[RMDB]
RNA sequence: GGGAACGACUCGAGUAGAGUCGAAAAUUUGAAAGGUCCGGUUGCCUCAUAACAUGGGAUGAACUUUUUCCUGGAGAAGAAAGACCCUGGUUUCUCGAGUAUGUGGACGAUAGAGACAGGUGGCAGUGGAACCUCCCAAACUCGAGGGAAAUAAAUGAAGUCGUGUAUUAUUCGUAAUACACGACUUAAAAGAAACAACAACAACAAC
Reactivity to 2A3 in 0.01 (KOAc 150mM, MgCl2 10mM, bicine 150mM(pH8.5), 24C), signal-to-noise 1, nucleotides 027 to 156: u140u030u050g010a030a020a000g020g000u060c070c010g030g000u060u020g020c010c020u040c020a080u090a120a070c030a090u080g010g020g000a020u030g040a050a110c090u040u000u040u130u110c000c000u030g050g010a120g030a080a000g030a010a080a000g040a020c010c000c000u020g010g090u020u110u050c010u000c030g010a020g010u030a020u180g080u170g000g000a010c060g020a040u100a130g140a020g020a040c010a020g050g010u030g020g000c010a000g010u040g020g020a010a020c000c050u030c000c030c000a040a040a040c050u030c000g010a090g040g010g000a060a020a060u110a000a070a020u190g070
Reactivity to DMS in 0.01 (KOAc 150mM, MgCl2 10mM, bicine 150mM(pH8.5), 24C), signal-to-noise 2, nucleotides 027 to 156: u000u010u000g020a130a150a080g020g040u000c030c030g000g000u010u000g020c010c010u000c040a110u000a110a150c040a240u000g020g010g010a120u000g020a080a090c060u000u000u000u000u000c000c010u000g020g010a210g010a060a070g010a100a060a120g010a170c090c010c020u010g000g020u000u000u000c010u010c000g000a150g030u000a040u010g010u000g020g020a040c060g000a150u000a040g000a140g000a070c060a070g030g020u000g020g020c030a100g030u010g000g000a040a070c000c010u020c010c000c010a040a060a060c040u000c010g020a050g020g000g010a020a080a110u010a030a040a130u000g020
This 207-nucleotide RNA was probed chemically with 2A3 and DMS. High DMS reactivity at an A or C suggests that its Watson-Crick edge is free. For 2A3, 980 sequencing reads were counted. Values cover nucleotides 27 to 156. Conditions: 150 mM KOAc, 10 mM MgCl2 and 150 mM bicine (pH 8.5), 24 C.